[RMDB]
RNA sequence: GGGAACGACUCGAGUAGAGUCGAAAAUUCGACGGGGCAUGAGGAGGGUGACUGAAGCCUGCUCGGUCAGAGCGAACCCGUAACAGCGAACAACAUCGUUCGUUUCUCCCGUCAAGCCGCCCCUGUGGUAGGAAAGUUUAUUCGUAAACUUUCCUACAAAAGAAACAACAACAACAAC
Reactivity to 2A3 in 0.01 (KOAc 150mM, MgCl2 10mM, bicine 150mM(pH8.5), 24C), signal-to-noise 9, nucleotides 027 to 126: u100u050c040g000a010c010g000g000g010g040c130a100u240g050a040g080g070a050g010g020g000u040g070a050c060u110g070a080a010g030c010c010u020g010c020u040c040g060g040u300c070a020g010a010g030c030g020a020a030c000c000c000g010u040a070a030c020a060g010c000g010a000a010c020a030a050c030a270u180c110g000u000u000c000g000u010u070u000c020u010c000c000c000g000u000c000a000a000g040c020c030g050c010c000c000c010u150g040u090g140
Reactivity to DMS in 0.01 (KOAc 150mM, MgCl2 10mM, bicine 150mM(pH8.5), 24C), signal-to-noise 9, nucleotides 027 to 126: u020u010c110g010a020c020g010g000g010g030c180a080u030g010a110g020g010a190g000g000g010u010g010a100c120u010g010a070a150g020c030c020u010g000c010u010c040g010g010u010c090a150g000a090g010c040g010a110a050c000c000c010g000u020a080a120c220a090g000c010g010a020a010c030a120a140c260a130u040c160g010u000u000c020g010u000u010u010c040u010c010c010c000g000u000c030a070a070g000c070c080g010c020c010c000c070u020g010u020g010

This 177-nucleotide RNA was probed chemically with 2A3 and DMS. DMS adducts were read by reverse transcription with MarathonRT. It was measured as part of the RMDB libraries RFM100 and RFMREP. The reactions ran in a buffer of 150 mM KOAc, 10 mM MgCl2 and 150 mM bicine (pH 8.5), at 24 C. In probing experiments dimethyl sulfate is read out at A N1 and C N3, which are open when not base-paired.